[RMDB]
RNA sequence: GGGAACGACUCGAGUAGAGUCGAAAAGGAUCCUUCGUAGUCACGAAGGUGACUGCCUCGUGUACAGUUACAAGUGACUAGACAAGGUGUCAUCGUACACGAGGAUGACGUCUUGAAUAAAGGAUCGCUACUUGUUAGUAUUCGUACUGACAAGUAGAAAAGAAACAACAACAACAAC
Reactivity to 2A3 in 0.01 (KOAc 150mM, MgCl2 10mM, bicine 150mM(pH8.5), 24C), signal-to-noise 9, nucleotides 027 to 126: g030g000a000u000c010c000u020u030c080g160u070a010g010u010c010a000c030g070a150a040g250g000u000g000a000c000u010g010c000c020u080c080g120u140g030u070a080c020a040g010u030u040a030c020a110a130g010u010g020a010c000u020a030g030a100c030a030a010g060g010u030g010u010c000a010u020c020g100u130a030c130a030c120g080a070g080g000a000u010g000a000c010g010u010c000u010u040g070a090a060u180a100a080a000g000g000a000u010c010g000
Reactivity to DMS in 0.01 (KOAc 150mM, MgCl2 10mM, bicine 150mM(pH8.5), 24C), signal-to-noise 9, nucleotides 027 to 126: g010g000a010u000c000c000u000u000c130g020u000a020g010u000c000a010c000g010a160a140g020g010u000g010a020c000u000g010c080c020u000c160g010u000g020u000a160c010a050g010u000u000a040c080a090a280g010u000g000a020c010u000a090g010a220c060a030a030g000g000u000g000u000c000a010u000c030g010u010a050c150a080c200g000a050g000g000a010u000g000a020c030g010u000c010u000u000g010a150a110u010a060a040a020g010g000a010u000c010g000